[RMDB]
RNA sequence: GGGAACGACUCGAGUAGAGUCGAAAAGAUUUAUGUUUGGCACACGUUUAAAUGUCAAUCAAUCAACUGGAAUAGCCAUCCAGAAAACUGGCUUUCACACUAUUUCCCACGAUUCCGUGAAUUCGGGAAAUGCAACACUUAUUGAUAGGUACGUCGCAUCUUGUCGAUAUUUCGAUAUCGACAAGAUAAAAGAAACAACAACAACAAC
Reactivity to 2A3 in 0.01 (KOAc 150mM, MgCl2 10mM, bicine 150mM(pH8.5), 24C), signal-to-noise 6, nucleotides 027 to 156: g010a000u100u120u100a140u190g020u000u020u030g000g000c020a050c020a020c090g040u060u110u260a130a150a050u040g000u010c010a000a010u020c030a030a060u010c030a020a080c050u030g010g020a080a090u040a090g000c000c000a010u010c030c010a050g190a090a070a010a030c030u010g010g010c000u040u110u150c100a070c000a020c040u100a150u060u020u000c010c010c000a040c050g060a080u140u040c020c020g040u050g100a090a080u090u080c020g030g010g010a010a050a050u070g030c030a070a050c040a040c090u120u110a090u200u180g100a110u100a100g020g040u090a030c050g030u040c030g010c040
Reactivity to DMS in 0.01 (KOAc 150mM, MgCl2 10mM, bicine 150mM(pH8.5), 24C), signal-to-noise 2, nucleotides 027 to 156: g000a170u000u000u000a100u010g010u000u000u000g030g060c010a070c080a160c130g030u000u000u000a030a140a050u000g020u000c020a030a030u000c040a070a140u000c060a130a200c050u000g050g010a100a120u000a120g000c040c050a150u000c020c000a180g000a080a070a070a100c090u000g050g010c050u000u000u010c030a110c060a110c140u000a120u000u000u000c000c000c010a110c120g020a160u010u000c020c120g000u000g000a070a150u010u010c040g000g000g000a020a040a060u000g000c060a070a040c030a050c040u000u010a090u000u000g010a090u000a030g000g010u000a090c050g030u000c040g030c100